[RMDB]
RNA sequence: GGGAACGACUCGAGUAGAGUCGAAAAAAAAAGGAGGAUGAGAAAUAUAGAGAGAGAUCGGUACUCCCACGCGCGUCUCUCACUGAUAAGAGGGAUAAGAGGAUGAUUAUGAGUUAGCGCGCAAAAACGUAGCUAUAAGGUUCGCCUUAUAGCUACGAAAAGAAACAACAACAACAAC
Reactivity to 2A3 in 0.01 (KOAc 150mM, MgCl2 10mM, bicine 150mM(pH8.5), 24C), signal-to-noise 2, nucleotides 027 to 126: a000a000a000a010a020g030g000a030g000g000a050u080g020a010g050a060a160a000u180a020u150a070g040a010g010a010g010a000g020a070u040c020g000g040u020a040c020u020c020c000c000a010c040g020c000g000c020g030u010c000u000c000u000c040a020c030u060g070a070u040a170a050g030a050g050g010g030a030u060a100a050g020a010g060g000a040u060g020a010u050u230a040u260g060a020g030u030u100a020g000c010g000c000g000c040a000a000a000a000a100
Reactivity to DMS in 0.01 (KOAc 150mM, MgCl2 10mM, bicine 150mM(pH8.5), 24C), signal-to-noise 2, nucleotides 027 to 126: a030a020a030a120a060g010g020a060g020g000a050u000g010a100g010a060a080a060u020a090u020a080g000a100g020a040g000a030g000a020u000c010g000g010u000a080c130u010c000c000c010a080c100g000c040g020c040g020u000c010u010c020u010c020a060c100u030g000a090u010a050a080g000a030g010g000g000a030u000a060a050g010a110g010g000a080u000g000a080u000u000a060u000g000a080g010u000u010a060g010c030g020c010g010c140a030a050a040a040a080